[RMDB]
RNA sequence: GGGAACGACUCGAGUAGAGUCGAAAAACUUUUAGCGAUUAUCGUUAUAGAAAUGUCCUUGGCAUAUCGCUAUGCACAGAGGUAUUUGUAGCGCAAUAGCUAUUGAAGGACAUUACCUCUCAAAUAAUCCGUUCAACUAAUUCGUUAGUUGAACGGAAAAAGAAACAACAACAACAAC
Reactivity to DMS in 0.01 (KOAc 150mM, MgCl2 10mM, bicine 150mM(pH8.5), 24C), signal-to-noise 2, nucleotides 027 to 126: a040c100u020u000u000u000a010g000c000g020a180u000u010a120u000c050g050u010u000a050u010a060g010a040a050a050u010g000u000c000c000u000u000g010g010c010a010u000a000u000c100g000c040u000a000u000g020c070a110c150a090g000a010g020g010u000a110u010u010u000g010u000a020g010c080g010c100a050a030u000a110g000c060u000a070u010u000g000a060a060g020g000a110c050a020u000u000a050c090c040u010c030u000c070a100a040a030u000a070a180
Reactivity to 2A3 in 0.01 (KOAc 150mM, MgCl2 10mM, bicine 150mM(pH8.5), 24C), signal-to-noise 2, nucleotides 027 to 126: a000c030u140u150u080u080a000g000c010g010a040u130u080a100u300c010g010u010u040a080u010a070g070a020a030a020u060g010u030c020c000u000u030g030g050c040a030u020a030u280c050g000c010u000a050u070g070c070a050c050a120g140a060g000g170u190a150u010u110u070g060u040a040g050c030g000c080a100a100u050a050g000c000u020a010u070u140g060a010a010g040g000a010c000a010u000u000a010c030c010u020c010u060c090a040a070a020u170a040a040